[RMDB]
RNA sequence: GGGAACGACUCGAGUAGAGUCGAAAAUGAAAGCUGUGAGAGCGAGGCGGGCGGAGGAUGAGGCCGUGCCCGGGCUCUGGCUGCAGCCGCCCGGGGACACGCCGUGCACCCUCGGGCUCCGGAAAAAUACGCAUAAGUAGUUCGCUACUUAUGCGUAAAAAGAAACAACAACAACAAC
Reactivity to DMS in 0.01 (KOAc 150mM, MgCl2 10mM, bicine 150mM(pH8.5), 24C), signal-to-noise 5, nucleotides 027 to 126: u010g000a080a100a120g010c010u010g000u010g010a070g010a050g020c030g010a070g010g010c090g020g010g010c020g010g010a050g020g010a070u010g010a140g010g000c050c080g010u000g010c000c000c000g000g000g000c010u000c120u010g020g000c060u010g020c200a110g000c040c090g010c010c000c000g010g000g000g000a060c010a030c080g010c030c030g020u010g010c060a060c060c010c010u000c010g000g010g010c020u000c010c020g010g010a010a050a060a080a120
Reactivity to 2A3 in 0.01 (KOAc 150mM, MgCl2 10mM, bicine 150mM(pH8.5), 24C), signal-to-noise 2, nucleotides 027 to 126: u190g030a090a070a010g040c030u040g060u130g160a060g030a020g100c040g000a020g000g080c080g000g050g020c030g020g080a040g070g020a060u100g070a080g080g030c090c040g030u030g030c010c000c020g000g000g000c050u050c090u060g070g000c100u200g070c080a030g000c020c030g010c010c000c000g000g000g010g030a030c000a000c010g020c000c000g000u010g000c020a040c010c000c000u000c010g010g130g000c010u020c010c010g000g090a000a130a020a000a000
An RNA of 177 nucleotides, treated with DMS and 2A3 and read out base by base.
2A3 adducts were read by reverse transcription with SuperScript II with manganese.
For DMS, 6,167 sequencing reads were counted.
The data come from the RNA Mapping Database (RMDB), library M2PK90.
Conditions: 150 mM KOAc, 10 mM MgCl2 and 150 mM bicine (pH 8.5), 24 C.